Structure probing data (2A3 and DMS) for a 177-nucleotide construct. Reactivities are given for positions 27 through 126. Conditions: 150 mM KOAc, 10 mM MgCl2 and 150 mM bicine (pH 8.5), 24 C.

[RMDB]
RNA sequence: GGGAACGACUCGAGUAGAGUCGAAAAUGCAAGUUUGGUCUACUACUUUUUCAUUAAAAGGCGCGAUGGUGAACACUUUGCGGUAGAGAAGAAGCGUGUGGUGGCAAAAGGGUCGAGCCAAGCAUGAACUUAUAUGAUAGUUCGCUAUCAUAUAAGUAAAAGAAACAACAACAACAAC
Reactivity to 2A3 in 0.01 (KOAc 150mM, MgCl2 10mM, bicine 150mM(pH8.5), 24C), signal-to-noise 6, nucleotides 027 to 126: u080g000c030a060a050g020u030u060u050g050g000u020c020u030a050c010u050a130c020u130u060u030u030u100c040a070u070u240a100a100a060a080g070g000c040g000c020g040a030u070g020g070u060g060a080a010c020a010c090u070u090u120g010c040g040g030u060a040g030a000g020a180a010g040a050a010g010c020g010u040g050u040g040g040u020g020g000c020a030a050a010a050g040g000g000u010c010g010a010g030c020c000a010a000g020c010a030u080g030a020
Reactivity to DMS in 0.01 (KOAc 150mM, MgCl2 10mM, bicine 150mM(pH8.5), 24C), signal-to-noise 9, nucleotides 027 to 126: u010g010c070a080a080g020u000u000u000g010g000u000c020u000a080c050u000a100c030u010u000u000u000u010c090a100u010u010a060a070a110a100g010g010c060g010c060g010a070u000g010g010u000g010a080a110c110a050c060u000u000u000g010c070g010g020u000a060g010a100g010a070a070g000a070a090g010c060g020u000g030u000g010g020u010g010g010c080a040a050a080a110g010g000g010u000c040g010a090g010c030c040a050a100g010c100a080u000g000a100